[RMDB]
RNA sequence: GGGAACGACUCGAGUAGAGUCGAAAACACUCUUAAACAGGUUGCUGCUGCAGCUUGAUGGAAGCUGCCUCACGAGGUUAGACUUGAUGAAUCCCUCAGUAUGUGGUUUCAAUCUGUGUGAACAUACAAUACGAACAUUGAUUGAGGAUGAGGCUAGAUGUCAGCCUAUUUUCGAAUAGGCUGACAUAAAAGAAACAACAACAACAAC
Reactivity to 2A3 in 0.01 (KOAc 150mM, MgCl2 10mM, bicine 150mM(pH8.5), 24C), signal-to-noise 2, nucleotides 027 to 156: c050a030c010u040c020u070u240a180a170a000c020a030g010g050u040u020g020c050u010g020c010u120g000c030a030g020c010u080u210g070a070u110g080g030a000a010g010c000u020g040c000c000u000c000a080c080g080a010g080g020u080u200a020g070a170c040u070u100g040a040u050g040a160a090u070c010c020c000u010c000a050g010u050a140u210g120u040g030g130u010u180u080c000a000a000u000c000u000g000u010g070u070g080a030a000c010a040u210a080c080a120a160u120a130c070g120a170a030c030a080u040u060g060a080u010u080g000a020g040g000a050u120g000a000g010g010c000u070a080g000
Reactivity to DMS in 0.01 (KOAc 150mM, MgCl2 10mM, bicine 150mM(pH8.5), 24C), signal-to-noise 2, nucleotides 027 to 156: c060a140c040u000c060u000u000a090a090a160c080a080g000g000u010u000g000c060u030g050c020u010g000c010a070g000c040u000u020g000a140u000g020g020a060a070g030c020u000g000c030c060u000c060a060c060g010a050g040g030u000u010a150g040a090c090u000u010g030a130u000g020a120a100u020c050c000c030u020c040a170g050u010a120u000g050u000g020g000u000u000u000c040a020a070u010c090u010g040u000g020u000g020a110a080c060a180u000a070c030a120a140u000a210c060g020a110a040c070a040u000u000g020a100u000u000g000a100g020g000a070u010g000a080g040g040c020u000a060g000